[RMDB]
RNA sequence: GGGAACGACUCGAGUAGAGUCGAAAAGUUCACGAUCGAGAGUGAUCACUCGUACACGUACGAUCGAGUGAGUGAUCUCGUUCGUUCGAUCGAUCGAGAUCGUUCGAACACGUGUUCUCGUGAGAACUCUCGUGAGUUCUCGUACACGUACACGAGAGCUCUAACUUUGGUUCGCCAAAGUUAGAGCAAAAGAAACAACAACAACAAC
Reactivity to 2A3 in 0.01 (KOAc 150mM, MgCl2 10mM, bicine 150mM(pH8.5), 24C), signal-to-noise 4, nucleotides 027 to 156: g110u110u130c070a020c020g000a050u020c010g000a030g010a000g000u010g030a070u000c010a000c000u020c020g020u070a010c050a020c060g080u130a040c100g070a190u060c020g000a040g030u120g070a080g040u120g040a090u000c020u010c010g000u000u000c000g020u030u060c040g070a200u080c000g000a020u030c030g020a010g000a110u000c010g000u000u000c000g000a040a010c030a010c030g000u010g010u090u020c060u020c040g010u060g020a000g000a000a000c000u010c000u060c040g020u160g020a000g000u030u000c010u000c000g030u070a010c100a030c130g100u110a040c040a010c090g040a040g010a030
Reactivity to DMS in 0.01 (KOAc 150mM, MgCl2 10mM, bicine 150mM(pH8.5), 24C), signal-to-noise 1, nucleotides 027 to 156: g000u010u000c050a030c000g010a160u020c010g020a030g060a050g000u010g010a170u000c010a030c020u000c010g060u000a030c100a140c130g000u000a090c090g020a180u000c110g000a110g000u000g030a060g040u020g010a040u000c010u010c020g020u010u000c000g010u000u000c130g000a070u000c020g010a180u010c120g020a030g000a050u000c030g070u010u000c010g010a080a150c040a100c010g020u000g000u000u010c010u020c100g010u040g010a040g010a080a050c000u000c000u010c190g060u010g000a140g010u030u000c000u010c000g020u000a060c040a090c070g000u000a180c020a040c020g020a040g000a150
Record summary:
Structure probing data (2A3 and DMS) for a 207-nucleotide construct. For 2A3, 3,126 sequencing reads were counted. The RNA was probed in 150 mM KOAc, 10 mM MgCl2 and 150 mM bicine (pH 8.5) at 24 C. 2A3 is a SHAPE reagent: it acylates the 2'-hydroxyl of flexible nucleotides of all four kinds. 2A3 adducts were read by reverse transcription with SuperScript II with manganese.